[RMDB]
RNA sequence: GGGAACGACUCGAGUAGAGUCGAAAAAUUGGUCAGCUUCAGAAAUUGUUUGAUGCCGUCCGCUUUGGAUGAACCGACAUUAAUGACGUCCAUUGCGUUCGGAUGCCAGCGGAUGAAGUCGAAGGCCUGUAAGUACGGAGUUCGCUCCGUACUUACAAAAAGAAACAACAACAACAAC
Reactivity to 2A3 in 0.01 (KOAc 150mM, MgCl2 10mM, bicine 150mM(pH8.5), 24C), signal-to-noise 2, nucleotides 027 to 126: a000u090u080g020g000u000c000a010g000c020u050u000c020a010g100a050a120a080u140u090g110u120u130u210g110a080u220g080c000c000g000u010c000c000g000c010u010u020u000g010g000a020u030g030a120a080c120c080g180a110c110a100u180u300a130a150u160g040a030c040g000u000c040c010a020u000u030g000c000g000u000u020c010g010g000a010u040g040c000c000a000g020c000g010g030a020u010g010a020a000g000u030c060g080a150a040g030g000c010c000
Reactivity to DMS in 0.01 (KOAc 150mM, MgCl2 10mM, bicine 150mM(pH8.5), 24C), signal-to-noise 4, nucleotides 027 to 126: a100u010u010g000g010u000c020a170g000c010u000u000c010a040g000a150a120a130u000u000g010u000u010u000g030a060u000g000c080c000g000u000c060c010g040c020u000u000u010g030g020a030u000g000a120a170c200c110g010a100c180a110u010u010a100a110u010g000a150c080g000u000c030c030a010u010u000g020c010g020u000u000c010g010g010a040u000g000c180c020a010g010c050g010g020a220u000g010a020a000g010u020c060g010a130a080g000g000c020c020